[RMDB]
RNA sequence: GGGAACGACUCGAGUAGAGUCGAAAAAUGUAUAUUGUAUCAUCAAUUGCGGCACAGGCUGCGCCGGACAGGAGGGAUUUACUAGUACCCGAUGAUCCUGUACGGGAUGAAGAGGGGCGUGUUAUUGGGUGCCGCGCACUGGCAUUUAUCGGAGGAGCUAGGAAAGCGAUUUCGAUCGCUUUCCUAGAAAAGAAACAACAACAACAAC
Reactivity to 2A3 in 0.01 (KOAc 150mM, MgCl2 10mM, bicine 150mM(pH8.5), 24C), signal-to-noise 1, nucleotides 027 to 156: a000u160g140u070a250u010a100u120u120g020u060a100u120c080a020u000c020a100a170u150u090g010c000g000g000c010a010c070a120g160g000c040u040g000c020g000c090c000g010g060a030c000a030g000g090a010g030g040g000a060u110u180u090a100c090u100a070g200u070a030c000c000c000g010a010u110g050a030u030c020c000u000g000u020a000c080g000g020g000a010u190g110a070a010g050a060g010g030g040g000c090g030u070g030u030u150a140u120u070g050g030g000u020g000c050c010g000c020g000c000a030c050u050g040g000c030a050u090u120u050a050u050c170g020g000a000g030g000a030g030

Structure probing data (2A3) for a 207-nucleotide construct. For 2A3 the reverse transcriptase was SuperScript II with manganese.